[RMDB]
RNA sequence: GGGAACGACUCGAGUAGAGUCGAAAAUAACAGUGUCAUGACGCCUUGGCGUCAUUUAAUUAGCAAUGACUGUAUGCUAAUUGAAUUGUGUCUUGACACAAUGAUGCUGUUUAACAGUCAUUGAUACGAACUAGAGGUAUUUCGAUAUUUCUAGUUCAAAAGAAACAACAACAACAAC
Reactivity to DMS in 0.01 (KOAc 150mM, MgCl2 10mM, bicine 150mM(pH8.5), 24C), signal-to-noise 8, nucleotides 027 to 126: u020a010a010c010a010g010u000g010u000c000a010u000g000a020c010g010c000c030u040u040g010g010c010g010u000c000a010u000u000u000a000a000u000u000a000g000c000a050a090u000g000a020c000u000g010u000a230u010g000c000u000a000a010u000u000g010a010a010u000u000g010u000g000u000c060u030u020g000a030c010a010c000a020a010u000g000a010u000g010c000u000g000u000u000u010a060a030c000a000g010u000c000a190u030u030g010a140u030a100c220
Reactivity to 2A3 in 0.01 (KOAc 150mM, MgCl2 10mM, bicine 150mM(pH8.5), 24C), signal-to-noise 9, nucleotides 027 to 126: u090a000a000c000a000g010u000g010u020c000a000u020g000a000c000g010c020c040u190u300g150g010c000g000u000c000a000u000u000u000a000a000u000u000a000g000c000a010a020u060g000a010c000u000g000u020a020u080g000c000u000a000a000u000u000g010a000a000u010u000g000u000g010u020c070u140u300g060a010c000a000c000a000a000u000g000a000u010g000c000u000g000u010u000u020a010a000c000a000g000u000c000a010u020u240g070a050u060a090c110
About this RNA:
Source: RMDB library OK1LIB, as collected in RNAgym. Structure probing data (DMS and 2A3) for a 177-nucleotide construct. For 2A3, 74,849 sequencing reads were counted. 2A3 adducts were read by reverse transcription with SuperScript II with manganese. Values cover nucleotides 27 to 126. The reactions ran in a buffer of 150 mM KOAc, 10 mM MgCl2 and 150 mM bicine (pH 8.5), at 24 C.